Notes:
This 177-nucleotide RNA was probed chemically with DMS and 2A3.

RNA sequence: GGGAACGACUCGAGUAGAGUCGAAAAGAUAUGGACAAACACAAGCGAAGAACUAAAUCGGUCGGAAACGACCGAGUUUAGGGAGCUUGGUUUGUCCUAAGUCAAAACAGCGAUCUUCGGAUCGCUGCCAUAUAUGCCAGUUCGCUGGCAUAUAUGGAAAAGAAACAACAACAACAAC
Reactivity to DMS in 0.01 (KOAc 150mM, MgCl2 10mM, bicine 150mM(pH8.5), 24C), signal-to-noise 8, nucleotides 027 to 126: g000a030u010a300u010g000g010a010c000a000a010a010c000a160c010a010a000g010c000g020a160a150g000a150a260c010u000a000a010a040u000c000g010g010u000c000g010g000a060a040a120c000g010a010c000c000g000a010g010u000u000u000a000g010g010g010a090g020c000u000u000g000g010u000u000u000g010u000c000c000u000a000a050g000u000c020a100a080a100a300c010a000g000c000g000a010u000c000u000u010c240g030g000a010u000c000g010c000u000g010
Reactivity to 2A3 in 0.01 (KOAc 150mM, MgCl2 10mM, bicine 150mM(pH8.5), 24C), signal-to-noise 9, nucleotides 027 to 126: g010a000u030a020u100g000g000a000c000a000a010a010c180a050c010a300a000g010c030g290a300a130g080a300a130c010u010a010a000a020u010c000g020g000u000c000g000g020a020a040a030c000g010a000c000c000g000a010g000u000u010u010a000g010g010g040a120g010c000u010u010g000g010u000u000u010g000u010c000c000u000a000a000g000u000c020a000a010a130a180c010a010g000c000g010a010u010c010u080u240c300g110g000a010u000c000g000c000u000g000
2A3 is a SHAPE reagent: it acylates the 2'-hydroxyl of flexible nucleotides of all four kinds.
DMS adducts were read by reverse transcription with MarathonRT.
The RNA was probed in 150 mM KOAc, 10 mM MgCl2 and 150 mM bicine (pH 8.5) at 24 C.